[RMDB]
An RNA of 207 nucleotides, treated with 2A3 and DMS and read out base by base.
RNA sequence: GGGAACGACUCGAGUAGAGUCGAAAAUCGCGUCGGGGUCUGUAAGGUCAUGCACCCCGAAGGCAAUGGACGAAGCGGCUUUCUCAUCCAUGGUGAACGACAGAAAGACAAACUGGUGGUAUUGGAAUGCUAUGUAAGAAAGGACUUGGUCUACACAGUACGCCUAUUUAUUCGUAAAUAGGCGUACAAAAGAAACAACAACAACAAC
Reactivity to 2A3 in 0.01 (KOAc 150mM, MgCl2 10mM, bicine 150mM(pH8.5), 24C), signal-to-noise 4, nucleotides 027 to 156: u070c020g000c040g030u010c000g000g000g000g000u020c060u030g060u090a130a140g080g120u100c040a020u080g020c060a010c020c020c000c000g000a010a000g050g000c010a030a070u100g010g010a010c040g060a040a000g050c060g070g030c080u040u070u010c040u010c000a030u030c040c010a030u020g060g000u080g040a080a070c040g070a010c040a030g100a100a070a010g090a030c050a060a080a010c030u050g020g020u020g000g040u150a080u040u060g020g030a070a010u060g000c020u090a030u110g060u060a050a020g030a080a050a010g020g010a000c000u040u020g030g000u000c020u020a040c090a010c050a070
Reactivity to DMS in 0.01 (KOAc 150mM, MgCl2 10mM, bicine 150mM(pH8.5), 24C), signal-to-noise 2, nucleotides 027 to 156: u000c040g000c070g040u000c000g020g000g020g040u000c100u000g010u000a150a110g030g020u000c080a110u020g000c030a100c000c000c010c000g010a010a020g010g050c040a100a070u010g030g010a070c020g000a060a110g020c050g010g040c060u000u000u000c030u000c030a140u000c050c020a040u010g050g050u000g010a070a080c020g010a090c060a090g010a040a080a130g010a110c100a050a070a050c030u000g020g020u000g020g010u000a120u000u000g010g010a070a140u000g000c010u000a040u010g010u010a110a110g000a050a090a050g020g000a060c050u000u000g030g000u010c030u000a140c070a070c070a200
Source information:
2A3 adducts were read by reverse transcription with SuperScript II with manganese. For 2A3, 2,633 sequencing reads were counted. DMS adducts were read by reverse transcription with MarathonRT. Values cover nucleotides 27 to 156. The RNA was probed in 150 mM KOAc, 10 mM MgCl2 and 150 mM bicine (pH 8.5) at 24 C.